[RMDB]
RNA sequence: GGGAACGACUCGAGUAGAGUCGAAAAGUGGUGCUCGUGGCGCUUCACUACGAGCAGGAGAUCCAGAGGCGCCUGUUUGAUGUAUGACGUCACAUCCAGGCCGGCGGAAACCGUAACGGCAUAUGCAGCCCCAGAGGUAGUUCGCUACCUCUGGGGCAAAAGAAACAACAACAACAAC
Reactivity to 2A3 in 0.01 (KOAc 150mM, MgCl2 10mM, bicine 150mM(pH8.5), 24C), signal-to-noise 1, nucleotides 027 to 126: g120u140g010g030u050g000c010u010c010g000u020g000g010c010g000c170u190u100c150a060c020u040a020c030g010a000g000c000a010g070g000a040g000a060u050c070c070a050g000a070g140g000c090g060c000c000u020g020u050u060u130g080a070u070g040u070a140u140g100a050c030g050u050c030a010c010a070u010c030c010a010g020g050c020c000g010g000c000g000g000a060a120a120c090c000g000u000a050a000c030g000g010c050a050u060a070u300g020c020a030
The record gives the reactivity of an RNA of 177 nucleotides to 2A3.
The reactions ran in a buffer of 150 mM KOAc, 10 mM MgCl2 and 150 mM bicine (pH 8.5), at 24 C.